[RMDB]
RNA sequence: GGGAACGACUCGAGUAGAGUCGAAAAGGAGUUAAGUUCGCUUAACUCCCACUACCGAGAAUGCGACUCGGUAUAUCGCAAUAACCCUUGGAAACAAGGCAACCACUGACGACUUCGGUCGUCAGAAGCUACCCUGUAGGUUCGCCUACAGGGUAGCAAAAGAAACAACAACAACAAC
Reactivity to 2A3 in 0.01 (KOAc 150mM, MgCl2 10mM, bicine 150mM(pH8.5), 24C), signal-to-noise 2, nucleotides 027 to 126: g000g010a010g010u030u020a010a000g010u060u080c200g030c100u000u010a000a000c010u010c010c010c010a070c040u040a020c000c000g000a000g040a110a080u220g050c100g040a040c010u000c000g020g050u000a020u030a010u030c030g030c040a080a090u070a150a120c040c000c000u000u020g000g010a030a080a030c010a020a010g000g000c000a010a030c030c030a060c090u020g010a000c000g010a010c000u020u080c260g120g000u000c000g000u000c010a010g000a000a010
Reactivity to DMS in 0.01 (KOAc 150mM, MgCl2 10mM, bicine 150mM(pH8.5), 24C), signal-to-noise 1, nucleotides 027 to 126: g000g000a020g030u000u000a010a000g010u000u000c190g030c000u000u000a000a000c000u000c000c000c090a020c130u010a070c060c000g000a040g010a130a080u010g030c240g120a080c030u000c000g010g000u000a030u000a160u020c070g030c040a140a110u020a120a120c230c000c000u010u000g000g000a150a080a160c000a000a000g020g000c070a040a020c050c040a200c000u050g000a020c000g020a070c000u000u000c070g040g000u020c000g010u000c000a000g000a010a090